An RNA of 177 nucleotides, treated with DMS and read out base by base. High DMS reactivity at an A or C suggests that its Watson-Crick edge is free. The RNA was probed in 150 mM KOAc, 10 mM MgCl2 and 150 mM bicine (pH 8.5) at 24 C.
[RMDB]
RNA sequence: GGGAACGACUCGAGUAGAGUCGAAAAGAUAUGGAGGCGGUGAGGGAGCCACCCGCAACGCAGAUACUAACUCGGAAACGAGUUAGAGUAGUUGCCCGUGGCGAAGAACUCACCGCCUCCUAAGUCAGUUAUAUAUCUCGUUCGCGAGAUAUAUAACAAAAGAAACAACAACAACAAC
Reactivity to DMS in 0.01 (KOAc 150mM, MgCl2 10mM, bicine 150mM(pH8.5), 24C), signal-to-noise 3, nucleotides 027 to 126: g000a010u000a090u010g000g000a000g010g040c000g010g010u000g010a020g020g000g000a030g010c000c000a000c010c030c240g020c000a010a010c000g020c300a120g020a170u000a060c000u000a000a000c000u000c000g000g000a010a020a050c010g020a020g010u000u000a000g000a160g010u000a050g000u000u000g010c000c020c300g010u000g000g010c000g000a080a120g010a150a250c000u000c000a010c000c000g010c000c010u000c000c000u000a000a050g000u000c010a190